[RMDB]
RNA sequence: GGGAACGACUCGAGUAGAGUCGAAAAACAUAGGCCAUGCUUACGAGCAUGGCCUAUGACGAAUCUCAAGCAAUCAAGCAUUCUACUUCUAUUGCAACACUGAGGAGCUUACGAGCUCCUCAGUUAAAAAAGAGAGUAAUGUUCGCAUUACUCUCAACAUCUCAUACUCGUUCGCGAGUAUGAGAUGAAAAGAAACAACAACAACAAC
Reactivity to 2A3 in 0.01 (KOAc 150mM, MgCl2 10mM, bicine 150mM(pH8.5), 24C), signal-to-noise 1, nucleotides 027 to 156: a000c000a010u010a010g000g000c000c000a040u000g030c020u130u100a130c240g130a050g000c000a000u000g000g000c000c000u000a000u000g000a000c010g040a050a060u040c020u020c070a060a040g000c030a000a050u110c040a030a000g000c040a180u270u050c090u160a070c010u030u000c020u060a080u020u110g040c030a050a040c000a060c060u000g000a000g020g000a000g020c000u020u030a020c180g010a020g020c000u000c000c000u040c000a000g000u000u000a000a000a000a000a000a000g000a000g000a010g000u000a000a000u040g030u020u130c220g000c060a000u000u000a000c000u000c000u000c000a000a000

The record gives the reactivity of an RNA of 207 nucleotides to 2A3. The RNA was probed in 150 mM KOAc, 10 mM MgCl2 and 150 mM bicine (pH 8.5) at 24 C. The data come from the RNA Mapping Database (RMDB), library M2RFPK.